[RMDB]
RNA sequence: GGGAACGACUCGAGUAGAGUCGAAAAGUUCAAGCGAUUCUCCUGCCUCAGCCUCCCUAGUAGCUGAGAUUACGGGCGCCUGCCAUCGUGCCCAGCUAAUUUUUGUACUUUUAGUAGAGACGGUGGGUCAAAUAGUCAGCUUCGGCUGACUAUUUGAAAAAGAAACAACAACAACAAC
Reactivity to DMS in 0.01 (KOAc 150mM, MgCl2 10mM, bicine 150mM(pH8.5), 24C), signal-to-noise 1, nucleotides 027 to 126: g000u000u000c040a050a110g010c040g000a080u000u010c020u000c010c000u010g010c050c000u000c030a060g000c030c040u010c020c050c030u000a050g000u000a040g010c000u000g000a030g000a080u010u010a070c070g010g010g020c080g040c040c100u020g030c040c020a020u000c030g010u000g020c010c010c000a190g000c040u000a020a020u000u000u010u000u000g010u010a050c120u000u000u020u000a060g020u000a120g000a070g000a000c050g000g020u010g010g010g000

Notes
Chemical mapping of a 177-nucleotide RNA with DMS. It was measured as part of the RMDB library OK2TRN. The RNA was probed in 150 mM KOAc, 10 mM MgCl2 and 150 mM bicine (pH 8.5) at 24 C. Values cover nucleotides 27 to 126. High DMS reactivity at an A or C suggests that its Watson-Crick edge is free.